Conditions: 150 mM KOAc, 10 mM MgCl2 and 150 mM bicine (pH 8.5), 24 C. Chemical mapping of a 177-nucleotide RNA with 2A3 and DMS. High 2A3 reactivity points to a flexible backbone, as in loops and unpaired stretches. The data come from the RNA Mapping Database (RMDB), library RFM100.
[RMDB]
RNA sequence: GGGAACGACUCGAGUAGAGUCGAAAAACCCCCGAUCCGUCGCCCCCUCCACCCCGCGGAUUCCGGUCUCGACCGGUAGCCGUAUUGGGCGGGGACGGGCGGCGGUCCGGUGCUGAAGCCGGCGACAGCCUGAACACGAGUUCGCUCGUGUUCAGGCAAAAGAAACAACAACAACAAC
Reactivity to 2A3 in 0.01 (KOAc 150mM, MgCl2 10mM, bicine 150mM(pH8.5), 24C), signal-to-noise 2, nucleotides 027 to 126: a000c020c020c010c000c010g030a050u030c000c010g000u000c000g000c000c000c000c000c010u010c000c000a070c030c000c000c010g000c000g020g010a050u090u020c010c010g010g010u020c050u110c120g160a060c000c010g000g010u010a020g060c000c000g030u030a180u090u210g000g000g000c040g000g000g010g000a010c030g000g000g000c000g000g010c000g010g000u000c000c000g000g040u060g020c070u200g020a150a060g010c010c010g030g010c020g030a020c050a040
Reactivity to DMS in 0.01 (KOAc 150mM, MgCl2 10mM, bicine 150mM(pH8.5), 24C), signal-to-noise 1, nucleotides 027 to 126: a110c050c110c000c160c100g000a010u000c020c010g000u000c000g050c020c020c040c060c000u010c040c020a110c030c010c000c300g000c010g000g030a180u000u000c000c000g000g000u000c010u030c300g010a010c000c000g010g060u000a030g000c000c000g000u080a120u010u020g050g010g000c070g000g000g000g020a020c270g000g010g000c010g020g010c000g000g000u000c000c000g000g020u020g000c080u060g000a110a220g000c000c000g040g060c230g010a100c050a210